[RMDB]
RNA sequence: GGGAACGACUCGAGUAGAGUCGAAAAGGAUAACCGCGGGAAACUGUGGCUAAUAACACGAGUAAGACGCCGACCCAUCAGUUUUAUCGUACGGUAAGGGCGUACGAUGGCUUUAACGGGUACGGGGCAACUGCAGCAACUUCGGUUGCUGCAGUUGAAAAGAAACAACAACAACAAC
Reactivity to DMS in 0.01 (KOAc 150mM, MgCl2 10mM, bicine 150mM(pH8.5), 24C), signal-to-noise 2, nucleotides 027 to 126: g000g000a110u020a130a190c060c020g000c070g000g060g000a100a050a160c030u000g030u000g000g000c040u000a020a100u040a160a030c140a100c080g020a140g000u050a070a040g030a170c070g030c000c000g000a080c000c000c010a090u070c130a000g000u000u020u030u070a000u000c000g010u030a000c000g000g090u030a080a060g040g000g000c000g060u000a000c060g010a010u000g000g000c000u010u020u050a090a080c120g060g000g000u000a050c000g050g000g000g000
Reactivity to 2A3 in 0.01 (KOAc 150mM, MgCl2 10mM, bicine 150mM(pH8.5), 24C), signal-to-noise 4, nucleotides 027 to 126: g090g020a060u050a060a010c030c000g000c040g030g000g000a020a060a010c020u010g000u020g040g000c010u030a040a060u080a170a040c120a010c080g070a060g090u160a100a040g130a040c070g060c070c000g010a030c000c030c000a040u100c010a000g000u000u010u100u270a000u000c000g010u000a000c020g080g050u080a050a070g160g090g060c000g000u010a000c000g000a000u010g000g000c000u010u030u100a050a030c070g000g020g010u150a160c020g000g000g020g010